Background
Structure probing data (2A3 and DMS) for a 177-nucleotide construct. For DMS, 2,900 sequencing reads were counted. High 2A3 reactivity points to a flexible backbone, as in loops and unpaired stretches. 2A3 adducts were read by reverse transcription with SuperScript II with manganese.

RNA sequence: GGGAACGACUCGAGUAGAGUCGAAAAGUCGUCUGCCGUCGCGAAGAGUUUGGAAAGCGAACCAGCCCACAUGCGCGCGACGCGUUGGGUCCUCGGUCCCCAUGAAGAGCAGAGGGUGCUGGUCAAGCGAUUACGACGAGUUCGCUCGUCGUAAUCGAAAAGAAACAACAACAACAAC
Reactivity to 2A3 in 0.01 (KOAc 150mM, MgCl2 10mM, bicine 150mM(pH8.5), 24C), signal-to-noise 3, nucleotides 027 to 126: g040u060c040g010u040c030u010g010c030c030g010u000c000g000c000g000a080a070g050a070g120u190u300u170g130g050a090a060a000g000c110g030a030a060c000c000a010g000c000c020c000a060c010a090u040g070c020g030c000g040c050g060a030c020g000c000g000u020u070g010g000g000u040c030c020u080c080g080g000u040c000c010c000c000a050u180g080a210a120g040a060g010c040a000g020a060g110g040g010u100g000c010u040g000g030u020c040a050a030g070
Reactivity to DMS in 0.01 (KOAc 150mM, MgCl2 10mM, bicine 150mM(pH8.5), 24C), signal-to-noise 2, nucleotides 027 to 126: g010u000c070g020u000c050u000g000c040c000g020u000c020g000c000g010a070a070g020a090g000u000u000u000g000g000a050a100a170g040c090g010a060a020c040c030a090g000c020c010c010a050c110a150u010g000c060g020c020g000c000g010a050c050g000c130g000u000u020g010g000g020u000c030c030u000c130g000g000u000c030c000c000c160a160u030g010a130a110g000a070g000c010a020g000a110g010g000g000u010g030c000u000g000g000u020c120a030a110g000

The RNA was probed in 150 mM KOAc, 10 mM MgCl2 and 150 mM bicine (pH 8.5) at 24 C.